[RMDB]
RNA sequence: GGGAACGACUCGAGUAGAGUCGAAAAUCGGACAACACGUGCGGCACGUGCAACGGAAUUCCGACCAUUUGCAACCCUUACAUCGAUUGAACGCUUGAAUGGUAAAGAUGGGCGUGCUGAAGAUGAAACCAUAAAUGGUGUUCGCACCAUUUAUGGUAAAAGAAACAACAACAACAAC
Reactivity to 2A3 in 0.01 (KOAc 150mM, MgCl2 10mM, bicine 150mM(pH8.5), 24C), signal-to-noise 8, nucleotides 027 to 126: u040c000g000g020a010c020a090a020c030a070c060g090u110g060c070g110g010c070a020c070g060u090g060c040a080a050c030g020g080a080a160u190u040c000c010g020a020c020c030a050u030u030u100g030c040a080a090c010c010c000u020u070a060c020a060u030c030g060a060u050u170g050a090a020c030g010c030u040u090g080a070a050u110g080g080u200a130a090a020g070a050u130g000g030g000c000g010u020g010c030u020g020a020a010g020a020u090g050a140a020
Reactivity to DMS in 0.01 (KOAc 150mM, MgCl2 10mM, bicine 150mM(pH8.5), 24C), signal-to-noise 7, nucleotides 027 to 126: u000c030g010g040a070c130a110a100c040a060c060g010u000g010c090g030g010c060a060c060g010u010g000c060a080a100c090g010g000a190a160u010u000c010c020g010a100c060c030a080u010u010u010g010c110a110a090c030c000c030u010u010a160c060a030u000c030g000a170u010u000g010a040a050c050g010c040u000u000g000a050a060u000g010g010u010a050a110a090g000a100u000g010g010g000c020g020u000g010c000u000g010a120a120g000a030u000g000a130a120